[RMDB]
RNA sequence: GGGAACGACUCGAGUAGAGUCGAAAAUAUUUCAUCUCUCAAGGCCCUGAUGCUACUGUGUGAGAGCAAUUUAGUUAGAAAGAUCAUCAACAAUUAGUUGACAUCUCUAUCACACCUAUUACUGAGUUGAAAUUUCACUGACAUGAAUAAUAAGGGACUAUAAUAGGAUGUUCGCAUCCUAUUAUAGAAAAGAAACAACAACAACAAC
Reactivity to DMS in 0.01 (KOAc 150mM, MgCl2 10mM, bicine 150mM(pH8.5), 24C), signal-to-noise 2, nucleotides 027 to 156: u000a070u020u000u010c050a060u000c020u030c000u000c030a090a090g000g000c010c040c020u010g010a100u010g000c040u000a040c050u010g000u010g030u000g010a090g000a110g050c030a000a060u010u000u000a060g010u010u000a130g010a110a090a060g010a050u000c080a040u010c010a020a030c010a190a180u000u000a130g020u000u000g010a020c060a040u010c020u000c010u000a140u000c030a120c070a080c070c090u000a090u010u000a110c020u000g020a060g000u000u000g010a040a060a120u000u010u010c020a040c050u010g000a090c060a080u010g000a050a080u010a080a110u000a070a120g010g030g010a270
Reactivity to 2A3 in 0.01 (KOAc 150mM, MgCl2 10mM, bicine 150mM(pH8.5), 24C), signal-to-noise 6, nucleotides 027 to 156: u180a100u030u130u100c050a070u020c030u000c020u030c070a050a040g110g000c030c050c020u050g030a060u080g030c040u030a080c070u070g020u000g010u010g100a020g020a020g060c010a020a010u050u080u060a050g030u040u040a040g060a060a110a010g010a020u050c020a010u030c010a050a030c030a110a260u270u140a080g000u000u000g010a010c010a060u020c010u000c020u110a060u140c020a020c020a040c060c020u110a110u160u090a100c030u030g010a000g010u030u010g040a110a100a110u050u080u040c050a030c030u040g090a030c010a110u130g120a180a050u170a190a040u150a090a070g030g050g030a030
Structure probing data (DMS and 2A3) for a 207-nucleotide construct. The 2A3 profile rests on 3,216 reads. High DMS reactivity at an A or C suggests that its Watson-Crick edge is free.